[RMDB]
RNA sequence: GGGAACGACUCGAGUAGAGUCGAAAAGGCGUCUUCGCUGCCUCGGCCGCCGUGCACUGACCGGUAGCCGCCGUAAUGGCGGCAUUGUUCCCAUAAACGGAUGUGGGUGUGGGUGUCGAAGUAGCAGACCAUUAUGGAUGUUCGCAUCCAUAAUGGUAAAAGAAACAACAACAACAAC
Reactivity to 2A3 in 0.01 (KOAc 150mM, MgCl2 10mM, bicine 150mM(pH8.5), 24C), signal-to-noise 5, nucleotides 027 to 126: g100g020c060g100u060c070u110u090c100g000c020u010g000c000c000u000c010g010g010c040c070g010c010c020g130u050g020c010a010c030u070g090a070c010c000g000g030u030a050g010c000c000g000c010c000g060u130a090a160u200g000g000c000g000g000c000a000u020u150g000u010u010c010c000c000a020u110a020a180a000c040g030g020a080u130g080u170g300g070g000u020g010u040g020g030g010u040g020u010c000g000a020a000g010u020a010g000c010a010g030
Reactivity to DMS in 0.01 (KOAc 150mM, MgCl2 10mM, bicine 150mM(pH8.5), 24C), signal-to-noise 7, nucleotides 027 to 126: g010g010c130g020u000c040u000u000c110g010c020u000g010c020c020u000c030g010g020c030c050g040c020c010g020u010g010c030a050c040u010g010a120c020c010g000g000u000a130g010c000c000g010c000c000g010u010a150a100u020g020g010c000g000g020c010a030u000u010g000u000u000c000c000c010a160u010a040a110a110c040g000g010a120u000g020u010g010g010g010u000g030u000g010g010g020u000g010u000c010g000a040a040g020u000a040g010c040a180g010
An RNA of 177 nucleotides, treated with 2A3 and DMS and read out base by base. The RNA was probed in 150 mM KOAc, 10 mM MgCl2 and 150 mM bicine (pH 8.5) at 24 C. 2A3 adducts were read by reverse transcription with SuperScript II with manganese. For DMS the reverse transcriptase was MarathonRT. The 2A3 profile rests on 9,614 reads. In probing experiments dimethyl sulfate is read out at A N1 and C N3, which are open when not base-paired.